[RMDB]
RNA sequence: GGGAACGACUCGAGUAGAGUCGAAAAGAUAUGGAAGUACUGGAGCAACAGCCAAGGGAUCGGAAACGAUCCUUGGACAUGCUUAGAGUACUUCCUAAGUCAAAACCACGGAGUUCGCUCCGUGGAAGUUGAUAGUGUUGUUCGCAACACUAUCAACAAAAGAAACAACAACAACAAC
Reactivity to 2A3 in 0.01 (KOAc 150mM, MgCl2 10mM, bicine 150mM(pH8.5), 24C), signal-to-noise 4, nucleotides 027 to 126: g010a010u040a030u090g000g000a000a000g000u010a010c020u080g110g090a020g010c080a130a190c100a190g060c030c010a020a030g300g030g030a080u010c000g020g000a050a030a000c000g010a010u000c000c000u010u000g000g010a010c010a130u300g010c010u050u050a140g050a010g300u000a010c010u000u000c000c000u000a010a000g010u000c000a000a010a060a230c000c010a000c000g020g010a000g010u110u230c260g130c210u000c010c020g000u000g010g000a010a020
Reactivity to DMS in 0.01 (KOAc 150mM, MgCl2 10mM, bicine 150mM(pH8.5), 24C), signal-to-noise 4, nucleotides 027 to 126: g000a050u000a300u010g010g010a010a000g020u000a010c000u000g000g030a020g010c020a080a070c300a230g010c000c010a020a030g010g000g020a010u010c000g020g010a070a100a120c000g010a000u000c000c000u000u000g000g010a040c070a270u010g010c020u000u000a170g010a060g020u000a000c010u000u000c000c000u000a010a050g010u010c030a110a070a120a270c020c000a000c000g010g020a020g030u000u010c300g000c000u000c000c000g000u000g000g020a010a020
Structure probing data (2A3 and DMS) for a 177-nucleotide construct. The data come from the RNA Mapping Database (RMDB), library TTRDES. Reactivities are given for positions 27 through 126. For 2A3, 11,847 sequencing reads were counted. 2A3 adducts were read by reverse transcription with SuperScript II with manganese.